[RMDB]
RNA sequence: GGGAACGACUCGAGUAGAGUCGAAAAUGGAUGCGAAUGCGUAUCUGUGCUUGGACCCCCACCGGUCCACCUUCAAGUUUUGGCUAGCGACCCAGCUGAAGUGCUGCUGUGGGCGGGCACGAUGGCAGCAUAGGUAUGGCUUCGGCCAUACCUAUGCAAAAGAAACAACAACAACAAC
Reactivity to 2A3 in 0.01 (KOAc 150mM, MgCl2 10mM, bicine 150mM(pH8.5), 24C), signal-to-noise 2, nucleotides 027 to 126: u080g050g030a020u050g030c050g010a250a140u150g070c050g040u050a030u000c050u050g030u050g050c040u040u040g120g050a200c000c000c000c000c020a030c020c010g020g000u050c010c000a020c020c030u050u040c090a130a140g050u030u090u150u100g030g000c010u020a050g030c020g080a120c010c000c020a000g030c000u050g020a050a020g020u020g100c040u030g000c020u060g030u090g010g000g000c070g000g030g000c020a020c060g070a050u090g030g040c090a030
Reactivity to DMS in 0.01 (KOAc 150mM, MgCl2 10mM, bicine 150mM(pH8.5), 24C), signal-to-noise 2, nucleotides 027 to 126: u000g000g040a040u000g010c030g020a180a080u000g010c030g030u000a030u000c020u000g010u000g000c170u000u000g010g010a140c060c030c020c030c070a120c120c070g000g020u000c080c020a040c110c010u010u010c060a050a110g010u000u000u010u000g010g020c020u000a090g000c180g000a170c060c040c120a050g010c040u000g020a040a100g010u000g030c020u000g030c140u000g020u010g000g000g000c010g010g000g000c030a030c030g000a070u000g000g030c040a080
Chemical mapping of a 177-nucleotide RNA with 2A3 and DMS. The RNA was probed in 150 mM KOAc, 10 mM MgCl2 and 150 mM bicine (pH 8.5) at 24 C. High DMS reactivity at an A or C suggests that its Watson-Crick edge is free. Source: RMDB library OK2TST, as collected in RNAgym. Values cover nucleotides 27 to 126.